[RMDB]
RNA sequence: GGGAACGACUCGAGUAGAGUCGAAAAGGCUUGGCGGUCAUGGGCUUUCUCUCCGGAGGGAGAGAAAGUACCAUGAUAGCUGGGGGAAUCGGCGAGGCCCGGAAGGGAGCAGCCGUGCCUGGACGCCUUCUUCUGUCUCCUUCGGGAGACAGAAGAAAAAAGAAACAACAACAACAAC
Reactivity to 2A3 in 0.01 (KOAc 150mM, MgCl2 10mM, bicine 150mM(pH8.5), 24C), signal-to-noise 2, nucleotides 027 to 126: g050g020c040u060u090g020g000c020g010g000u000c000a000u000g010g010g000c000u000u010u000c000u000c000u000c020c010g230g160a270g080g240g000a010g040a000g020a000a000a000g050u040a120c000c040a020u000g000a000u000a020g000c000u050g030g000g000g020g040a050a220u140c020g000g000c000g000a020g100g000c000c010c000g040g060a090a170g060g000g000a000g000c020a000g000c000c000g000u000g020c000c010u000g030g030a030c060g040c000c030
Reactivity to DMS in 0.01 (KOAc 150mM, MgCl2 10mM, bicine 150mM(pH8.5), 24C), signal-to-noise 2, nucleotides 027 to 126: g000g030c010u010u000g000g000c000g010g030u030c020a020u000g000g000g030c000u000u000u030c020u000c000u000c000c000g000g070a300g000g020g000a030g000a010g000a000a000a000g000u000a070c010c000a000u000g010a010u010a070g030c010u000g010g000g010g000g000a250a090u000c000g010g000c000g000a290g000g000c000c010c000g050g060a110a180g020g000g000a000g000c000a300g000c010c030g010u000g010c040c000u000g000g000a200c080g020c040c020

Background:
An RNA of 177 nucleotides, treated with 2A3 and DMS and read out base by base. It was measured as part of the RMDB library RFM100. DMS adducts were read by reverse transcription with MarathonRT. For 2A3, 1,305 sequencing reads were counted. 2A3 adducts were read by reverse transcription with SuperScript II with manganese.